Notes
This 177-nucleotide RNA was probed chemically with DMS. Conditions: 150 mM KOAc, 10 mM MgCl2 and 150 mM bicine (pH 8.5), 24 C.

[RMDB]
RNA sequence: GGGAACGACUCGAGUAGAGUCGAAAAGAUAUGGAGCUAGACAUGCGUAUAUCGUCGGAAACGACGAUGUACGCAACAGCUAGUCUCCUAAGUCAAACGUCAAAAACAGUUCGCUGUUUUUGACGAAGGAAGGGAAUAGCUUCGGCUAUUCCCUUCCAAAAGAAACAACAACAACAAC
Reactivity to DMS in 0.01 (KOAc 150mM, MgCl2 10mM, bicine 150mM(pH8.5), 24C), signal-to-noise 1, nucleotides 027 to 126: g060a040u000a300u010g010g000a000g040c010u000a000g010a040c040a280u000g010c030g050u000a000u010a000u000c000g010u010c000g000g010a060a090a260c000g000a010c000g010a010u000g000u000a000c000g010c050a050a030c240a140g000c010u000a020g010u040c010u000c020c010u000a040a060g010u010c020a100a090a230c020g020u010c010a030a000a000a030a000c000a000g010u010u010c300g020c000u000g000u010u000u000u000u000g010a010c000g050a010a040
The data come from the RNA Mapping Database (RMDB), library TTRDEL. Values cover nucleotides 27 to 126.